[RMDB]
RNA sequence: GGGAACGACUCGAGUAGAGUCGAAAAGAUAUGGAACCGUCUGAGGGAGUGCGAUAUCGGAAACGAUAUACCGCACAUCGAUCUCAGGACGGUUCCUAAGUCAAACGUUCAAGUUCGCUUGAACGAACCAAAGCAGACGGUUCGCCGUCUGCUUUGGAAAAGAAACAACAACAACAAC
Reactivity to 2A3 in 0.01 (KOAc 150mM, MgCl2 10mM, bicine 150mM(pH8.5), 24C), signal-to-noise 1, nucleotides 027 to 126: g050a000u100a040u140g010g010a030a000c010c010g040u000c020u000g020a010g000g110g030a180g000u000g040c040g000a010u000a000u010c020g040g010a050a020a020c020g010a000u000a010u000a180c030c110g040c000a000c000a020u300c080g070a070u000c020u010c020a040g170g080a020c000g000g010u010u000c000c000u000a000a000g000u020c000a030a030a110c000g030u060u000c000a020a010g000u000u130c280g000c130u020u000g020a010a000c000g010a050a040
Reactivity to DMS in 0.01 (KOAc 150mM, MgCl2 10mM, bicine 150mM(pH8.5), 24C), signal-to-noise 2, nucleotides 027 to 126: g020a040u000a300u000g010g000a000a000c010c000g020u000c000u010g030a010g000g030g020a070g050u000g030c010g000a100u000a000u000c020g000g000a150a080a170c000g000a010u010a000u000a150c300c030g010c010a030c000a220u010c160g000a140u020c000u000c000a050g030g040a030c010g000g010u000u010c000c000u000a010a080g030u000c020a050a210a180c000g020u000u000c000a000a010g030u000u020c220g000c040u000u000g000a010a000c000g010a050a140

Description:
This 177-nucleotide RNA was probed chemically with 2A3 and DMS. For DMS the reverse transcriptase was MarathonRT. The 2A3 profile rests on 2,321 reads. 2A3 adducts were read by reverse transcription with SuperScript II with manganese. For DMS, 1,301 sequencing reads were counted.